Structure probing data (DMS and 2A3) for a 177-nucleotide construct. For 2A3, 1,260 sequencing reads were counted. High DMS reactivity at an A or C suggests that its Watson-Crick edge is free. Conditions: 150 mM KOAc, 10 mM MgCl2 and 150 mM bicine (pH 8.5), 24 C. The DMS profile rests on 905 reads. For DMS the reverse transcriptase was MarathonRT. For 2A3 the reverse transcriptase was SuperScript II with manganese.
RNA sequence: GGGAACGACUCGAGUAGAGUCGAAAAGUAACAAUCUUCGGAUUGUUACAUAGCCUCCAGGUGGAAACCAAAACCUUAGAAAGAAAAGACAAAGAAAAAGAAGUGACUACCUGUUCGCAGGUAGUAAAGUACAUAAGCACUUCGGUGCUUAUGUACUAAAAGAAACAACAACAACAAC
Reactivity to DMS in 0.01 (KOAc 150mM, MgCl2 10mM, bicine 150mM(pH8.5), 24C), signal-to-noise 1, nucleotides 027 to 126: g000u000a020a000c000a000a000u000c000u000u000c240g020g000a010u000u000g000u000u030a000c020a050u010a140g030c040c010u000c100c090a020g000g020u000g010g000a060a090a190c050c050a070a030a090a080c100c070u020u010a080g010a130a120a100g000a040a050a020a070g000a050c040a020a110a090g020a050a060a030a070a120g000a150a100g010u000g020a020c000u000a000c000c000u000g020u010u000c190g020c000a000g000g000u000a000g040u000a000a050
Reactivity to 2A3 in 0.01 (KOAc 150mM, MgCl2 10mM, bicine 150mM(pH8.5), 24C), signal-to-noise 2, nucleotides 027 to 126: g000u020a000a020c000a000a020u000c010u030u040c150g040g000a010u000u000g000u020u000a000c010a000u010a020g050c010c000u060c050c010a040g010g030u060g010g090a150a080a110c020c000a060a110a010a040c020c000u140u140a040g140a110a150a000g090a040a090a010a000g050a020c060a030a160a060g130a040a120a040a010a000g050a100a050g090u050g070a000c010u000a000c000c010u030g030u040u080c210g040c060a000g000g000u000a000g030u020a000a000